[RMDB]
RNA sequence: GGGAACGACUCGAGUAGAGUCGAAAAUUGAAAUUGAACCGUCCUGUUAUCGAAAGAUAGGCAAAAGAUACGAAAUGUGUGACAGCAUGGGAAGUAAAGGCAGACCGUGGUUCCCUUGAGUAUCUUAAUUAGGGGGACGAGUUCGCUCGUCCCCCAACAGAGAUUACUUCUUCGGAAGUAAUCUCUGAAAAGAAACAACAACAACAAC
Reactivity to 2A3 in 0.01 (KOAc 150mM, MgCl2 10mM, bicine 150mM(pH8.5), 24C), signal-to-noise 2, nucleotides 027 to 156: u110u090g050a030a010a050u070u080g010a040a040c000c010g060u040c010c000u050g060u230u060a140u170c040g040a030a010a100g010a050u060a050g040g030c020a090a110a060a040g010a010u010a010c010g030a010a080a060u090g050u000g030u050g030a070c100a030g010c010a050u020g010g000g000a010a050g040u120a100a030a070g080g000c030a020g050a080c010c040g010u040g040g140u050u010c000c000c030u010u010g000a020g010u000a010u000c000u010u050a150a070u120u150a070g000g000g000g000g000a000c000g000a000g030u060u040c080g010c070u010c000g000u000c000c010c020c000c000a000a000
Reactivity to DMS in 0.01 (KOAc 150mM, MgCl2 10mM, bicine 150mM(pH8.5), 24C), signal-to-noise 2, nucleotides 027 to 156: u020u010g000a060a110a160u000u020g020a070a140c070c030g020u000c020c020u000g020u000u010a150u020c050g000a160a100a160g000a070u000a040g000g030c060a050a090a020a040g010a040u000a020c040g020a050a100a090u010g010u010g020u000g030a180c150a230g020c030a090u000g030g000g000a060a100g010u000a050a030a070g010g000c080a150g000a140c020c020g000u000g030g000u000u000c020c000c000u030u010g000a180g000u000a040u000c010u000u000a060a140u010u000a200g000g010g030g030g030a040c010g010a020g030u000u000c170g050c010u000c000g010u000c010c000c000c000c000a000a000

An RNA of 207 nucleotides, treated with 2A3 and DMS and read out base by base. 2A3 adducts were read by reverse transcription with SuperScript II with manganese. DMS adducts were read by reverse transcription with MarathonRT. The data come from the RNA Mapping Database (RMDB), library M2RFPK. Reactivities are given for positions 27 through 156. The 2A3 profile rests on 1,280 reads. The DMS profile rests on 3,379 reads.